[RMDB]
RNA sequence: GGGAACGACUCGAGUAGAGUCGAAAAUGAGCACCGACGACGGAAGACGGCCGAUCCGCCGUGCGCUGAUCAGCGUGUACGACAAGACCGGGCUGGUAGACCUGGCACAGGGCCUGAGCGCGGCCGGAACGCGUAACACAUUCGUGUGUUACGCGUUAAAAGAAACAACAACAACAAC
Reactivity to DMS in 0.01 (KOAc 150mM, MgCl2 10mM, bicine 150mM(pH8.5), 24C), signal-to-noise 3, nucleotides 027 to 126: u010g030a070g010c040a130c040c000g000a050c030g010a050c030g010g000a060a040g000a120c050g000g000c020c020g000a150u010c040c050g010c000c000g000u000g000c010g000c040u010g000a130u000c130a070g000c010g000u000g030u000a040c040g000a130c260a110a150g000a060c020c010g000g000g010c020u000g010g000u010a060g010a080c060c020u010g010g020c070a100c110a070g010g000g000c030c010u000g020a080g000c090g020c050g000g000c020c010g020g010
Reactivity to 2A3 in 0.01 (KOAc 150mM, MgCl2 10mM, bicine 150mM(pH8.5), 24C), signal-to-noise 1, nucleotides 027 to 126: u190g020a010g020c050a050c110c040g020a010c030g020a000c030g030g000a000a010g070a040c020g010g000c000c000g020a010u020c030c020g000c000c010g020u010g010c060g000c030u070g100a300u120c080a010g000c020g000u030g050u060a070c050g040a060c040a110a010g000a020c000c020g000g000g000c000u030g020g000u060a040g060a140c010c010u020g080g000c060a030c060a180g080g000g000c020c020u080g040a050g000c080g020c010g020g020c030c030g000g010
This 177-nucleotide RNA was probed chemically with DMS and 2A3. The RNA was probed in 150 mM KOAc, 10 mM MgCl2 and 150 mM bicine (pH 8.5) at 24 C. The data come from the RNA Mapping Database (RMDB), library OK2TRN. For DMS the reverse transcriptase was MarathonRT. High DMS reactivity at an A or C suggests that its Watson-Crick edge is free. Reactivities are given for positions 27 through 126.